This 177-nucleotide RNA was probed chemically with DMS and 2A3. The reactions ran in a buffer of 150 mM KOAc, 10 mM MgCl2 and 150 mM bicine (pH 8.5), at 24 C.

RNA sequence: GGGAACGACUCGAGUAGAGUCGAAAAAGUGAUUGAGAAGAUGGAAACACUCCAAAGGCGAUAUGGAGGUGGCCUUAUAAGAAACCCCCUUUCACGCAACUCUACCCAUGAGAUGUACUGGGUGAGCUCACGCACGUAAGUUCGCUUACGUGCGUGAAAAAGAAACAACAACAACAAC
Reactivity to DMS in 0.01 (KOAc 150mM, MgCl2 10mM, bicine 150mM(pH8.5), 24C), signal-to-noise 1, nucleotides 027 to 126: a060g000u040g000a040u000u000g000a160g010a100a080g020a050u100g000g000a010a020a030c030a040c020u000c000c000a000a120a080g000g020c090g030a070u010a130u000g010g000a010g010g000u000g020g000c000c000u000u020a070u010a090a290g050a020a110a100c020c000c000c000c050u040u000u000c000a080c130g000c110a090a180c000u000c020u040a050c030c040c000a000u020g000a090g000a190u060g020u040a050c150u000g000g000g000u000g030a020g000c150
Reactivity to 2A3 in 0.01 (KOAc 150mM, MgCl2 10mM, bicine 150mM(pH8.5), 24C), signal-to-noise 3, nucleotides 027 to 126: a000g060u100g030a080u140u080g020a020g040a140a000g020a100u140g020g020a090a070a010c060a010c030u000c020c000a000a090a060g150g060c110g080a050u040a110u260g060g010a020g050g010u070g070g030c010c050u090u120a190u040a110a040g030a130a080a080c000c000c010c000c020u050u040u090c000a010c020g060c070a140a180c010u000c000u040a070c000c010c000a030u090g020a060g030a060u240g050u180a070c040u000g010g000g000u030g000a000g000c000